[RMDB]
RNA sequence: GGGAACGACUCGAGUAGAGUCGAAAAGGAGUGGGAGCAUUUGCCAUUCCACAGAUGAACACCUGCAAUGUGCUAGUAACUGUGCUGGAUGCUGAAGAUUUGGCAGGAAAUUAAACAAACACAGUCCUUCAUGGCAGCACUUACAUUCUAUUUGGGGGUAUUUACUCGGAUUCGUCCGAGUAAAUACAAAAGAAACAACAACAACAAC
Reactivity to DMS in 0.01 (KOAc 150mM, MgCl2 10mM, bicine 150mM(pH8.5), 24C), signal-to-noise 1, nucleotides 027 to 156: g000g020a050g060u000g020g010g010a180g090c080a110u020u000u010g040c030c000a070u000u000c030c050a100c060a020g000a050u010g020a120a010c060a130c060c040u000g000c000a080a070u010g020u000g000c020u000a140g000u000a050a030c050u000g010u000g010c000u010g000g000a070u000g040c040u020g030a100a120g010a300u000u000u020g000g000c020a150g060g030a120a130a170u000u000a060a100a050c030a050a060a120c030a050c030a040g030u000c020c000u000u000c060a080u030g010g040c030a010g020c100a080c010u020u000a070c010a070u000u000c060u010a150u000u000u000g040g000g020g000
Reactivity to 2A3 in 0.01 (KOAc 150mM, MgCl2 10mM, bicine 150mM(pH8.5), 24C), signal-to-noise 5, nucleotides 027 to 156: g020g020a020g000u040g010g000g040a080g050c060a130u060u120u220g070c030c000a020u020u000c010c000a010c020a020g140a070u220g040a090a000c040a040c070c010u030g010c030a060a120u090g030u060g030c040u020a060g010u040a070a100c060u060g000u020g030c010u000g030g050a140u100g010c070u040g020a120a060g050a160u100u110u080g030g030c040a020g000g160a000a020a060u210u210a050a140a060c050a050a050a000c030a000c030a090g020u040c000c010u060u070c010a020u060g070g000c000a010g030c010a000c010u020u030a030c000a070u070u100c050u220a170u160u090u110g010g000g000g000